Structure probing data (DMS and 2A3) for a 207-nucleotide construct. For DMS the reverse transcriptase was MarathonRT. 2A3 adducts were read by reverse transcription with SuperScript II with manganese. Conditions: 150 mM KOAc, 10 mM MgCl2 and 150 mM bicine (pH 8.5), 24 C. Source: RMDB library PDB130, as collected in RNAgym. For 2A3, 3,093 sequencing reads were counted. For DMS, 2,400 sequencing reads were counted.
[RMDB]
RNA sequence: GGGAACGACUCGAGUAGAGUCGAAAAUCGAGGAAGAGUUAUCUUUUCUUGUUAACAUUGUCUUGGGGUCCUCCGAAUCAGGUCAACUGGAGACGAGGAUUCAUCGCACAAUGGAAGAGCACAGUCCUUUGGAUUGGGUCUCGCAUCCGCUAAAUGGGUUCUUUAGUGAGUUCGCUCACUAAAGAACAAAAGAAACAACAACAACAAC
Reactivity to DMS in 0.01 (KOAc 150mM, MgCl2 10mM, bicine 150mM(pH8.5), 24C), signal-to-noise 2, nucleotides 027 to 156: u000c020g000a060g020g000a010a030g010a070g000u000u000a080u000c010u010u010u010u000c040u000u010g010u000u010a120a200c030a140u000u000g000u000c040u000u000g040g000g030g030u020c000c000u000c000c000g000a300a230u000c060a000g030g030u000c240a100a210c010u000g000g020a090g000a200c170g000a030g030g030a160u000u000c000a070u000c090g040c180a030c050a010a060u010g000g030a070a120g010a090g000c040a030c020a000g030u000c000c010u000u000u000g080g030a050u000u010g020g050g040u000c000u000c050g020c100a170u000c000c000g030c090u020a090a060a120u010g060g000
Reactivity to 2A3 in 0.01 (KOAc 150mM, MgCl2 10mM, bicine 150mM(pH8.5), 24C), signal-to-noise 5, nucleotides 027 to 156: u140c010g010a010g040g020a000a020g040a030g090u240u170a250u170c020u060u060u070u020c020u040u040g080u070u090a050a040c000a000u020u000g010u010c020u090u300g000g000g000g000u000c010c000u000c000c020g020a030a030u030c000a000g010g140u200c090a150a130c130u020g020g020a050g000a030c000g000a000g010g000a000u000u000c000a020u070c020g010c010a010c010a010a010u020g000g020a050a010g010a010g020c030a000c000a030g030u020c020c000u110u170u300g010g000a020u020u030g020g000g040u020c010u010c030g000c020a040u030c000c020g010c120u100a120a080a070u130g010g010